This 177-nucleotide RNA was probed chemically with DMS and 2A3. The 2A3 profile rests on 10,224 reads.
[RMDB]
RNA sequence: GGGAACGACUCGAGUAGAGUCGAAAACGACGGUGGUUCGCCCCCUCUGGGCCGCACCUCCAUUGGUGCGUAUCGACGUUUGGAUCGGUAAUAUACGCAUUGCAGGGUCGAUAAGCGAUGUGACAUACUAUCAUACUGCAUUCGUGCAGUAUGAUAGAAAAGAAACAACAACAACAAC
Reactivity to DMS in 0.01 (KOAc 150mM, MgCl2 10mM, bicine 150mM(pH8.5), 24C), signal-to-noise 9, nucleotides 027 to 126: c070g010a090c150g010g020u010g000g010u000u000c050g020c080c020c010c100c160u010c120u010g000g010g020c110c030g020c050a020c010c010u000c110c160a120u010u000g000g010u000g010c010g010u000a020u000c020g010a020c020g010u000u000u010g010g000a060u000c020g010g010u000a070a110u010a120u010a080c050g010c080a030u000u000g020c030a060g000g000g000u000c030g010a070u010a050a100g010c040g010a070u010g010u010g010a150c170a110u010a160
Reactivity to 2A3 in 0.01 (KOAc 150mM, MgCl2 10mM, bicine 150mM(pH8.5), 24C), signal-to-noise 5, nucleotides 027 to 126: c020g070a010c050g040g080u090g020g050u100u090c030g050c010c000c010c000c010u080c060u100g000g030g000c030c010g000c010a010c000c010u070c050c020a120u040u150g030g000u040g000c000g010u020a020u040c020g010a020c070g040u040u130u140g080g040a080u030c020g000g010u030a190a050u140a040u050a150c030g010c050a010u000u090g070c010a040g080g030g010u060c040g030a060u030a120a040g030c020g030a030u060g030u030g070a030c020a050u120a070
The data come from the RNA Mapping Database (RMDB), library OK2TRN. Conditions: 150 mM KOAc, 10 mM MgCl2 and 150 mM bicine (pH 8.5), 24 C. For DMS the reverse transcriptase was MarathonRT.